[RMDB]
RNA sequence: GGGAACGACUCGAGUAGAGUCGAAAAGAUGGAGACAGGAAGUUGAUGAUGAUGCGCAAAGAGAUCGAGAAGGGCACUAACCGCCAGAUAGUGAAUACUCGAGAGCGCUGGCGGUACUUCCUAAGAAAUUACGGCGAUACUUCGGUAUCGCCGUAAUAAAAGAAACAACAACAACAAC
Reactivity to 2A3 in 0.01 (KOAc 150mM, MgCl2 10mM, bicine 150mM(pH8.5), 24C), signal-to-noise 1, nucleotides 027 to 126: g000a030u110g100g020a030g000a100c030a030g060g000a000a010g000u030u100g070a050u030g010a110u030g000a000u110g050c050g000c160a050a190a000g130a030g000a150u020c040g000a000g000a110a100g020g010g030c000a030c000u000a000a000c020c000g000c000c000a000g030a110u110a180g020u020g030a220a000u070a200c000u090c060g030a000g030a070g060c000g000c030u000g000g000c000g000g000u000a000c000u040u010c000c000u000a020a020g010a000a090
Reactivity to DMS in 0.01 (KOAc 150mM, MgCl2 10mM, bicine 150mM(pH8.5), 24C), signal-to-noise 1, nucleotides 027 to 126: g030a060u010g000g000a120g030a130c140a100g000g000a050a070g000u000u030g010a020u000g000a050u000g000a070u010g030c110g040c030a140a080a110g000a030g030a180u000c010g000a000g000a110a170g000g000g000c030a050c030u000a100a060c000c000g000c060c030a000g000a080u050a040g000u040g000a110a110u040a070c020u000c000g000a050g020a120g000c010g040c040u000g000g000c070g020g010u020a000c080u000u030c000c000u000a080a070g010a010a030